[RMDB]
RNA sequence: GGGAACGACUCGAGUAGAGUCGAAAAGAUCCUGGGAUUUAGGUGCCUUUCGCCUGAAAACACACGUGUCCAUUCAACACUCCAGAGGAACCCGAGCGCUGGCCUUCCCUGGACUCCAGUGGUAACGUUCCUACUGAGCCUUCGGGCUCAGUAGGAAAAAAGAAACAACAACAACAAC
Reactivity to 2A3 in 0.01 (KOAc 150mM, MgCl2 10mM, bicine 150mM(pH8.5), 24C), signal-to-noise 1, nucleotides 027 to 126: g010a110u000c000c050u030g080g000g000a070u070u120u120a080g070g000u050g060c050c060u080u140u030c030g000c000c010u030g040a040a010a010a020c090a000c000a020c040g020u020g050u000c020c000a080u050u090c030a100a000c050a000c000u030c020c050a080g010a100g030g050a020a010c000c000c000g000a010g010c000g000c050u010g000g010c000c000u050u000c010c000c020u020g030g000a010c000u000c000c000a000g010u030g000g070u140a100a000c010g000
Reactivity to DMS in 0.01 (KOAc 150mM, MgCl2 10mM, bicine 150mM(pH8.5), 24C), signal-to-noise 1, nucleotides 027 to 126: g070a060u010c010c010u000g010g000g000a120u020u000u000a040g040g000u000g040c000c000u000u000u040c170g000c000c000u000g010a060a150a070a140c140a040c140a030c100g000u020g000u000c000c000a030u000u000c100a180a200c090a200c120u000c000c060a030g060a080g000g010a000a090c090c000c000g020a060g000c060g000c060u000g000g000c010c040u000u000c040c030c000u000g000g000a160c000u000c020c090a040g000u050g000g010u000a140a120c040g090